[RMDB]
RNA sequence: GGGAACGACUCGAGUAGAGUCGAAAAUUUGAGAAGCUACAUGUAGCUCACCAGUGGUUUUCUCUAAGGAAUCACAAAAGUAAACUACCCAACCACAUGCCACGUAAUAUUUCAGCCAUUCAGAGGAACCACAGCAUAAGUUCGCUUAUGCUGUGGUAAAAGAAACAACAACAACAAC
Reactivity to DMS in 0.01 (KOAc 150mM, MgCl2 10mM, bicine 150mM(pH8.5), 24C), signal-to-noise 2, nucleotides 027 to 126: u000u010u000g000a070g030a120a080g000c010u000a050c040a140u010g010u000a120g020c070u010c040a080c110c080a210g000u000g000g000u010u010u000u030c000u000c100u000a080a140g010g020a070a030u020c060a010c040a090a040a070a050g000u000a010a050a070c100u000a100c020c000c020a040a060c110c060a020c070a060u000g000c070c020a010c080g010u000a050a060u000a050u000u000u000c040a070g010c040c030a060u000u000c060a060g010a140g000g000a130
Reactivity to 2A3 in 0.01 (KOAc 150mM, MgCl2 10mM, bicine 150mM(pH8.5), 24C), signal-to-noise 2, nucleotides 027 to 126: u130u080u110g060a070g030a050a020g000c010u030a000c020a190u150g020u040a040g020c000u000c010a020c030c050a020g010u040g000g020u040u080u070u010c040u010c000u010a040a120g090g000a080a040u030c010a040c000a040a140a040a020g130u130a110a120a050c030u100a080c010c000c000a010a010c020c020a050c010a060u120g010c010c010a050c030g010u030a140a070u070a130u140u110u060c050a030g070c070c020a030u050u000c020a030g040a040g120g040a060
Notes: The record gives the reactivity of an RNA of 177 nucleotides to DMS and 2A3. The data come from the RNA Mapping Database (RMDB), library OK2TRN. The RNA was probed in 150 mM KOAc, 10 mM MgCl2 and 150 mM bicine (pH 8.5) at 24 C. The DMS profile rests on 1,022 reads. 2A3 adducts were read by reverse transcription with SuperScript II with manganese.